RNA sequence: GGGAACGACUCGAGUAGAGUCGAAAAACGGCCAUAGAGAAUUGGCUGUGGAUGACGACUUUGUGAUGGACCUAUAUGAGGCAUACCAUGGCAAUGUGCAGAAACCGUGGAUGAAGAAGGGAUGCAAUCAAAAUUUACCGUUCGCGGUAAAUUUUGAAAAAGAAACAACAACAACAAC
Reactivity to DMS in 0.01 (KOAc 150mM, MgCl2 10mM, bicine 150mM(pH8.5), 24C), signal-to-noise 1, nucleotides 027 to 126: a060c020g000g010c000c010a030u020a140g030a170g030a180a100u000u020g020g040c000u010g020u000g010g030a170u000g010a170c120g000a070c070u000u000u030g050u000g000a090u000g000g000a120c010c000u010a170u010a090u000g020a070g030g000c050a040u020a190c030c020a010u000g000g060c060a080a040u000g010u010g000c060a030g000a160a080a110c040c020g000u000g000g010a030u000g020a070a060g000a080a080g020g020g020a070u000g000c170a100a100

Structure probing data (DMS) for a 177-nucleotide construct.
Conditions: 150 mM KOAc, 10 mM MgCl2 and 150 mM bicine (pH 8.5), 24 C.
DMS (dimethyl sulfate) methylates the pairing face of unpaired adenines and cytosines.